About this RNA: The record gives the reactivity of an RNA of 207 nucleotides to DMS and 2A3. It was measured as part of the RMDB library OK3TST. The 2A3 profile rests on 721 reads. For 2A3 the reverse transcriptase was SuperScript II with manganese. The RNA was probed in 150 mM KOAc, 10 mM MgCl2 and 150 mM bicine (pH 8.5) at 24 C. DMS adducts were read by reverse transcription with MarathonRT.
[RMDB]
RNA sequence: GGGAACGACUCGAGUAGAGUCGAAAACAUCCUAGUUGGGGAAGACAGGAAGCCUGCUUUUCACAUGGAGACAGGAUGAAUGAAGAUGCUGGCAUGUCUACACACAGCACACUCCUGACAUGGAGGGGUUAAGCAUGUGCAUAUCACCAUGAAGUGACUACGUCACGUGAUUCGUCACGUGACGUAGAAAAGAAACAACAACAACAAC
Reactivity to DMS in 0.01 (KOAc 150mM, MgCl2 10mM, bicine 150mM(pH8.5), 24C), signal-to-noise 1, nucleotides 027 to 156: c050a120u000c010c010u000a060g000u010u010g000g000g000g030a000a120g000a060c040a100g010g030a180a110g020c020c000u000g000c000u000u000u010u000c010a040c110a090u000g020g010a150g010a070c050a040g010g000a070u000g010a270a130u000g010a120a040g020a120u020g020c050u010g000g010c100a100u000g010u000c020u000a040c070a050c020a120c000a170g000c090a070c050a080c010u000c020c000u000g010a230c160a110u020g000g010a140g000g000g010g000u000u010a120a060g010c000a040u050g020u000g000c030a030u030a060u000c020a030c000c010a040u010g020a020a160g030u000g000a210
Reactivity to 2A3 in 0.01 (KOAc 150mM, MgCl2 10mM, bicine 150mM(pH8.5), 24C), signal-to-noise 2, nucleotides 027 to 156: c000a070u030c000c000u080a090g000u060u160g010g000g000g000a020a020g050a050c010a000g060g070a080a040g030c000c000u050g050c020u100u030u060u020c140a150c030a070u140g030g040a070g060a040c040a050g000g050a060u040g040a020a100u060g000a030a030g100a080u130g040c040u050g020g030c050a090u040g000u050c110u210a000c050a000c000a000c000a130g040c000a030c020a000c010u030c000c010u080g030a050c040a130u140g050g040a040g000g020g020g000u110u090a010a000g000c050a060u050g000u040g040c030a000u030a050u170c010a010c000c000a080u230g110a110a040g090u080g050a030